Chemical mapping of a 177-nucleotide RNA with DMS and 2A3. The RNA was probed in 150 mM KOAc, 10 mM MgCl2 and 150 mM bicine (pH 8.5) at 24 C. It was measured as part of the RMDB library OK2TRN.
RNA sequence: GGGAACGACUCGAGUAGAGUCGAAAAGAAUACUAAAAUUCCUUAGGAAAAUUAGUCAUUGCCCAUGUGUGAUAGCUGUUUUCCAUUUUGAAUUUUAACCAUUUUGGGAAAAGGAAGAGAAUGGGAAUCAUCCCUAGGAAUUCGUUCCUAGGGAUGAAAAAGAAACAACAACAACAAC
Reactivity to DMS in 0.01 (KOAc 150mM, MgCl2 10mM, bicine 150mM(pH8.5), 24C), signal-to-noise 3, nucleotides 027 to 126: g000a070a060u010a040c020u000a010a000a040a300u000u000c000c000u000u020a210g020g010a020a020a040a280u000u000a010g000u010c100a050u000u000g000c000c010c080a130u020g020u020g020u010g010a070u010a070g000c050u000g010u000u000u000u000c000c000a050u000u000u000u000g010a120a130u000u000u000u000a040a300c030c010a150u000u000u030u010g010g000g010a030a020a040a150g000g000a110a080g000a100g000a020a010u010g000g010g010a060a080
Reactivity to 2A3 in 0.01 (KOAc 150mM, MgCl2 10mM, bicine 150mM(pH8.5), 24C), signal-to-noise 1, nucleotides 027 to 126: g000a000a010u080a050c010u010a000a000a130a110u020u000c000c010u070u140a080g000g000a020a030a050a020u140u070a090g010u030c090a020u060u150g000c000c020c060a120u110g060u060g000u000g050a010u130a050g010c030u000g070u050u000u000u010c000c030a040u000u100u030u030g080a080a010u080u040u080u090a180a190c010c030a110u220u170u160u210g020g030g090a050a100a030a030g050g070a050a050g010a020g070a120a050u010g000g030g000a020a010